Source: RMDB library OK3TST, as collected in RNAgym. The record gives the reactivity of an RNA of 207 nucleotides to 2A3 and DMS. The DMS profile rests on 3,162 reads. The reactions ran in a buffer of 150 mM KOAc, 10 mM MgCl2 and 150 mM bicine (pH 8.5), at 24 C.
RNA sequence: GGGAACGACUCGAGUAGAGUCGAAAAGUAUUUGAAGGCAAUAAUCAGACCUUAAGAAUAAGUAGGAGUUAGGUUAGCCAUGAGGAUAUGGAAAGACUAUUCCAAGCAGGAGGAACAGUACAUACAAAGGCCAAGGAGACAGAAAGAUCAGUAAAGACCCAUUAUCCAGUUUCGACUGGAUAAUGGGAAAAGAAACAACAACAACAAC
Reactivity to 2A3 in 0.01 (KOAc 150mM, MgCl2 10mM, bicine 150mM(pH8.5), 24C), signal-to-noise 4, nucleotides 027 to 156: g030u020a130u070u070u120g070a040a040g020g010c030a040a050u100a130a070u130c040a030g090a180c000c000u100u060a100a030g040a070a070u180a110a010g070u050a030g010g030a030g020u010u060a030g030g020u020u020a010g040c020c030a030u030g040a030g070g010a020u030a030u140g030g020a030a050a030g030a020c050u080a120u080u040c060c010a000a010g040c030a020g020g090a000g000g020a010a020c020a040g060u070a030c000a030u100a030c050a020a120a010g040g000c020c000a020a030g010g000a010g020a000c010a000g060a020a060a000g060a030u150c010a010g080u210a020a020a210g080a040
Reactivity to DMS in 0.01 (KOAc 150mM, MgCl2 10mM, bicine 150mM(pH8.5), 24C), signal-to-noise 2, nucleotides 027 to 156: g010u010a060u010u000u000g020a100a060g030g030c020a080a120u000a040a090u000c120a100g000a080c010c030u000u000a070a170g020a100a080u000a050a110g010u010a090g010g020a120g000u000u000a030g010g030u000u000a080g010c050c040a090u000g000a080g020g010a120u000a050u000g020g010a050a020a120g000a110c060u010a100u000u000c000c000a050a170g000c010a080g010g010a140g020g000a010a020c030a060g020u000a050c070a140u000a130c050a050a080a120g040g010c020c040a040a080g020g000a130g020a000c020a050g000a060a050a120g010a010u000c060a070g040u010a060a070a130g000a120